The record gives the reactivity of an RNA of 207 nucleotides to 2A3. 2A3 adducts were read by reverse transcription with SuperScript II with manganese. The reactions ran in a buffer of 150 mM KOAc, 10 mM MgCl2 and 150 mM bicine (pH 8.5), at 24 C.
RNA sequence: GGGAACGACUCGAGUAGAGUCGAAAAGAUAGAUUCGUCUAUCAAAAACCGUAGGCUGUAGUUAUCGUCAGUGACGAAGAACAGAGCUUCGAAAGAGGCUCUGGGAGUCACUAGCGAAUUCUACAGCCUAAACGGAAAAAACGUGCUUCGGCACGAAGCAGUCCUACUACUUCGGUAGUAGGACUGCAAAAGAAACAACAACAACAAC
Reactivity to 2A3 in 0.01 (KOAc 150mM, MgCl2 10mM, bicine 150mM(pH8.5), 24C), signal-to-noise 1, nucleotides 027 to 156: g010a000u010a000g040a040u030u100c180g010u000c070u010a010u000c010a000a170a000a090a000c010c010g000u000a010g000g000c000u010g010u010a030g000u110u080a300u230c010g050u040c050a010g020u000g010a000c010g110a300a170g030a040a000c000a010g000a010g000c000u000u010c000g110a120a070a080g000a000g020g000c000u000c010u000g010g000g000a020g010u000c000a000c000u000a010g000c000g010a000a000u020u040c000u010a000c000a010g070c000c000u000a000a000a000c000g010g240a000a000a000a200a020a000c010g000u000g010c000u070u080c200g210g000c040a000c020g080a030a060